Description: The record gives the reactivity of an RNA of 177 nucleotides to 2A3 and DMS. Conditions: 150 mM KOAc, 10 mM MgCl2 and 150 mM bicine (pH 8.5), 24 C. For DMS the reverse transcriptase was MarathonRT. For 2A3, 2,950 sequencing reads were counted.

RNA sequence: GGGAACGACUCGAGUAGAGUCGAAAAACAUCAUUCAGGACUUUGCCAACACACCGGAGAUGACAAGUGUACGUGUUGUGGAGCUGACGCGACCGGUGAGUUCUGCACAUGUUGCAAAUCAGCAGGCGUGUAUCGGAUGAUUCGUCAUCCGAUACACAAAAGAAACAACAACAACAAC
Reactivity to 2A3 in 0.01 (KOAc 150mM, MgCl2 10mM, bicine 150mM(pH8.5), 24C), signal-to-noise 3, nucleotides 027 to 126: a000c010a060u160c070a070u120u150c030a060g000g050a040c030u090u090u150g040c030c020a070a020c030a010c000a000c070c030g030g020a090g020a090u120g040a030c060a190a000g040u010g020u080a040c050g020u030g010u110u130g030u040g020g000a010g040c020u040g050a020c040g020c020g080a110c040c010g070g030u020g030a010g000u030u020c020u040g000c020a020c020a050u040g000u080u040g020c020a020a030a160u060c040a040g030c020a010g070g070c030
Reactivity to DMS in 0.01 (KOAc 150mM, MgCl2 10mM, bicine 150mM(pH8.5), 24C), signal-to-noise 3, nucleotides 027 to 126: a110c090a080u010c050a090u000u010c070a070g020g020a110c100u000u000u000g030c040c020a100a110c100a060c050a010c030c000g000g010a120g010a080u000g010a080c110a070a060g020u010g020u010a060c070g030u010g010u000u010g060u000g010g010a090g020c010u000g030a010c040g030c060g000a110c080c090g020g000u000g000a030g010u000u010c020u000g000c060a020c070a030u000g020u000u000g000c020a000a060a100u000c050a030g010c050a100g020g010c130